[RMDB]
The record gives the reactivity of an RNA of 170 nucleotides to DMS and 2A3. It was measured as part of the RMDB library 15KLIB. DMS adducts were read by reverse transcription with MarathonRT. The DMS profile rests on 15,581 reads. 2A3 adducts were read by reverse transcription with SuperScript II with manganese.
RNA sequence: GGGAACGACUCGAGUAGAGUCGAAAACCGGCUGGGCAACGAUCCGAGGGAACUAUUCCUCUCGAGAAUCGGCAAAUGGGGCCCCUCGCUCGUAUCUCCGAGAGGAGACGAGAAAGAGGAGGAUCUCGCAACGGUCUGUUCGCAGACCGUAAAAGAAACAACAACAACAAC
Reactivity to DMS in 0.01 (KOAc 150mM, MgCl2 10mM, bicine 150mM(pH8.5), 24C), signal-to-noise 4, nucleotides 027 to 129: c060c030g060g030c080u050g000g000g000c070a050a030c000g020a040u000c030c000g010a000g020g030g010a030a130c250u050a150u000u000c020c020u070c010u000c010g050a100g030a110a060u000c040g000g000c120a050a070a060u000g030g010g010g030c020c020c010c010u010c020g030c000u020c020g000u060a160u050c020u000c050c030g040a170g030a210g020g010a000g010a040c030g000a010g000a030a060a150g030a010g060g000a080g000g000a080u020c020u030c000g000c150a110
Reactivity to 2A3 in 0.01 (KOAc 150mM, MgCl2 10mM, bicine 150mM(pH8.5), 24C), signal-to-noise 6, nucleotides 027 to 129: c000c010g000g010c090u110g030g090g030c040a060a050c040g020a040u000c020c010g000a020g030g010g020a040a030c060u130a180u170u070c020c010u100c000u000c010g150a150g030a140a050u030c010g000g010c030a030a050a120u230g000g000g020g010c000c000c000c000u000c000g020c010u000c000g070u100a170u060c000u000c000c010g050a050g010a010g040g000a020g000a020c000g000a000g000a050a240a020g020a010g010g010a100g040g000a080u010c020u030c040g000c010a030